Structure probing data (2A3 and DMS) for a 177-nucleotide construct.
Values cover nucleotides 27 to 126.
The reactions ran in a buffer of 150 mM KOAc, 10 mM MgCl2 and 150 mM bicine (pH 8.5), at 24 C.
High DMS reactivity at an A or C suggests that its Watson-Crick edge is free.

RNA sequence: GGGAACGACUCGAGUAGAGUCGAAAAGUUUCUAAGUUCGCUUAGAAACAAAUCCAGCGCGGAAACGAACGUGCCUGACCGUAUUCGUUAAAGAUUUUCAAAAAACGUUCCUCUUCGGAGGAACGAACUACCAUACACUCUUCGGAGUGUAUGGUAGAAAAGAAACAACAACAACAAC
Reactivity to 2A3 in 0.01 (KOAc 150mM, MgCl2 10mM, bicine 150mM(pH8.5), 24C), signal-to-noise 4, nucleotides 027 to 126: g020u000u010u000c010u010a020a010g010u030u070c120g030c100u010u000a000g010a000a000a000c000a030a040a000u090c010c020a030g030c020g000c020g020g070a120a020a010c020g030a040a000c000g010u010g020c040c060u100g070a090c020c030g050u070a160u090u090c020g000u020u050a080a080a030g110a180u110u110u100u240c110a070a030a000a010a020a050c010g000u010u000c000c000u000c000u050u070c210g110g000a000g000g000a010a000c000g000a000a000
Reactivity to DMS in 0.01 (KOAc 150mM, MgCl2 10mM, bicine 150mM(pH8.5), 24C), signal-to-noise 2, nucleotides 027 to 126: g010u000u010u000c000u000a000a000g020u000u030c220g010c000u000u000a000g000a010a000a010c010a060a110a060u000c020c080a220g020c090g010c020g010g020a060a050a040c030g010a060a060c030g010u000g000c020c030u010g030a090c130c090g000u010a070u000u000c030g000u000u000a120a150a110g000a120u000u000u000u000c080a000a030a050a050a040a100c020g000u000u000c000c000u000c000u000u010c160g000g000a010g000g000a000a000c000g000a010a040